[RMDB]
Overview: Chemical mapping of a 177-nucleotide RNA with DMS and 2A3. Source: RMDB library M2PK90, as collected in RNAgym. For DMS, 3,973 sequencing reads were counted. Conditions: 150 mM KOAc, 10 mM MgCl2 and 150 mM bicine (pH 8.5), 24 C. The 2A3 profile rests on 2,496 reads.
RNA sequence: GGGAACGACUCGAGUAGAGUCGAAAAUUAAAUGAUGUAGUACGGGCGCCACUGAAGGACGGGUCCUCUCCGAAAGGAGAGUUGAGUAGAGUGUGAGCAGGACCGGGUGCUAGUCACUGGUGAAAAACUUCAUUAAUGUCUUCGGACAUUAAUGAAGAAAAGAAACAACAACAACAAC
Reactivity to DMS in 0.01 (KOAc 150mM, MgCl2 10mM, bicine 150mM(pH8.5), 24C), signal-to-noise 4, nucleotides 027 to 126: u000u010a060a090a150u010g000a050u010g010u010a040g000u010a070c080g010g000g020c050g010c060c030a050c050u000g000a120a090g000g020a070c040g000g000g020u000c080c000u000c010u000c000c000g000a090a060a150g010g000a020g000a010g000u000u000g000a100g010u000a070g000a080g000u010g020u010g000a070g030c050a080g000g000a090c050c040g010g010g000u000g010c030u010a060g010u000c030a040c060u000g010g010u000g000a060a040a070a070a130
Reactivity to 2A3 in 0.01 (KOAc 150mM, MgCl2 10mM, bicine 150mM(pH8.5), 24C), signal-to-noise 2, nucleotides 027 to 126: u110u070a090a060a120u100g010a030u080g040u140a030g030u020a060c040g020g000g040c060g010c030c040a040c000u020g060a060a020g090g060a020c010g000g030g040u030c010c000u000c000u000c000c000g040a060a010a010g010g000a010g000a000g010u020u040g020a020g010u090a020g010a030g010u100g000u020g040a060g010c010a000g000g050a030c040c000g070g030g000u020g000c010u030a020g030u060c010a000c070u060g070g000u160g100a060a030a010a020a020